Source information: Structure probing data (2A3) for a 207-nucleotide construct. The RNA was probed in 150 mM KOAc, 10 mM MgCl2 and 150 mM bicine (pH 8.5) at 24 C. For 2A3, 870 sequencing reads were counted. It was measured as part of the RMDB library OK3TST.

RNA sequence: GGGAACGACUCGAGUAGAGUCGAAAAAGAUGGGCAACCGCUGGUGGGAAGUCGGCGAGGGCGAGGAGCUGGACAUGCUCAUGGCUCGCGCAACGGCCAACCCUAUGCCGGCGGGGUUCCCGCUGCUUGAGCGGGACAACUCGCACAAGACGACGAACAUUUCUAAGCACUUCGGUGCUUAGAAAUGAAAAGAAACAACAACAACAAC
Reactivity to 2A3 in 0.01 (KOAc 150mM, MgCl2 10mM, bicine 150mM(pH8.5), 24C), signal-to-noise 2, nucleotides 027 to 156: a030g050a070u160g020g060g040c060a090a030c000c060g000c040u010g000g020u090g050g000g040a020a030g010u010c020g020g010c020g000a010g010g000g020c010g030a060g040g010a000g080c030u120g060g100a090c070a210u250g000c010u000c000a040u070g200g010c010u010c000g000c000g010c010a020a300c000g010g000c020c010a100a100c090c000c000u040a100u300g010c000c000g000g000c000g000g000g000g000u030u110c020c000c000g000c030u070g000c010u010u070g050a060g010c020g000g010g000a020c020a000a260c010u000c010g020c000a030c010a010a010g060a080c040g010a000c050g030a090a000